[RMDB]
RNA sequence: GGGAACGACUCGAGUAGAGUCGAAAAUUAAAGAUCGAAAGAUCGCGAAACUCGCCGGCGCCGCUGUAGGCGGACCUUCAGCGACAGCGCCAGAACGAAUAUGGUCCGCAGUACGAAAGUACAAAAACAUAAAGAUCCUGUUCGCAGGAUCUUUAUGAAAAGAAACAACAACAACAAC
Reactivity to 2A3 in 0.01 (KOAc 150mM, MgCl2 10mM, bicine 150mM(pH8.5), 24C), signal-to-noise 1, nucleotides 027 to 126: u100u090a080a070a030g000a020u010c030g020a080a000a050g010a010u020c030g000c020g020a160a190a130c040u040c030g080c030c030g000g000c000g000c020c020g000c000u020g020u010a000g110g090c000g000g000a000c000c010u030u010c010a000g010c000g040a060c070a060g000c010g000c010c000a030g050a040a030c080g040a130a070u150a060u160g000g000u020c000c000g000c010a000g010u030a000c000g060a090a070a060g000u020a000c030a020a040a000a010a000
Reactivity to DMS in 0.01 (KOAc 150mM, MgCl2 10mM, bicine 150mM(pH8.5), 24C), signal-to-noise 2, nucleotides 027 to 126: u000u000a080a130a110g000a000u000c000g000a150a130a240g010a010u000c000g010c080g010a080a120a140c140u000c030g040c130c060g000g000c020g010c010c020g010c010u000g000u000a040g000g020c010g010g000a000c000c010u010u000c010a020g020c000g000a090c170a140g000c010g020c000c000a090g010a030a080c150g000a110a030u010a040u010g000g010u020c010c010g010c030a190g000u010a000c000g000a100a070a190g020u000a000c000a060a030a070a040a120
The data come from the RNA Mapping Database (RMDB), library M2PK90. An RNA of 177 nucleotides, treated with 2A3 and DMS and read out base by base. The 2A3 profile rests on 1,773 reads. For DMS the reverse transcriptase was MarathonRT. For DMS, 1,510 sequencing reads were counted.